[RMDB]
RNA sequence: GGGAACGACUCGAGUAGAGUCGAAAAGACAGCCCCGCAAGGAUCCAGAAACACAGGGUACUUGUUGGUGUAAUGCGACACAGUCCCCAGAGGUUGCAGAACACGAGAUUCCCCGAAAAAGUCAUUCUGACAGUGCUCGAGAUCAAUUUCUGUAAUGACAGCACAGAUAAUUCGUUAUCUGUGCUGUAAAAGAAACAACAACAACAAC
Reactivity to DMS in 0.01 (KOAc 150mM, MgCl2 10mM, bicine 150mM(pH8.5), 24C), signal-to-noise 3, nucleotides 027 to 156: g010a140c060a210g000c020c020c000c020g030c030a050a050g020g000a010u010c010c010a180g010a230a210a150c110a180c120a090g030g010g040u010a030c030u000u000g000u000u000g050g030u000g040u000a060a130u000g020c010g020a130c040a060c050a170g000u000c000c030c000c030a110g040a160g000g010u000u000g010c020a110g010a130a090c020a070c010g010a110g020a150u000u010c020c000c000c040g010a060a040a100a080a120g010u000c010a070u010u000c030u000g010a050c010a100g030u010g000c030u000c020g000a050g000a110u000c040a090a120u000u000u010c010u000g010u000a070a130u000g010
Reactivity to 2A3 in 0.01 (KOAc 150mM, MgCl2 10mM, bicine 150mM(pH8.5), 24C), signal-to-noise 2, nucleotides 027 to 156: g030a010c010a000g040c020c000c000c000g000c040a010a020g000g010a010u000c000c000a010g090a110a240a030c140a020c080a090g020g000g030u030a040c000u030u050g030u030u220g040g000u030g000u070a130a140u090g000c000g040a000c030a000c020a110g120u090c090c000c000c020a010g070a060g080g010u020u010g000c010a010g030a050a020c040a010c090g050a040g030a120u080u090c000c000c000c040g030a070a000a020a000a000g010u000c010a030u090u040c060u150g030a020c030a030g080u040g080c020u030c020g050a060g010a080u090c030a070a060u050u050u000c020u010g090u080a050a100u220g050

An RNA of 207 nucleotides, treated with DMS and 2A3 and read out base by base. In probing experiments dimethyl sulfate is read out at A N1 and C N3, which are open when not base-paired. Source: RMDB library OK3TST, as collected in RNAgym.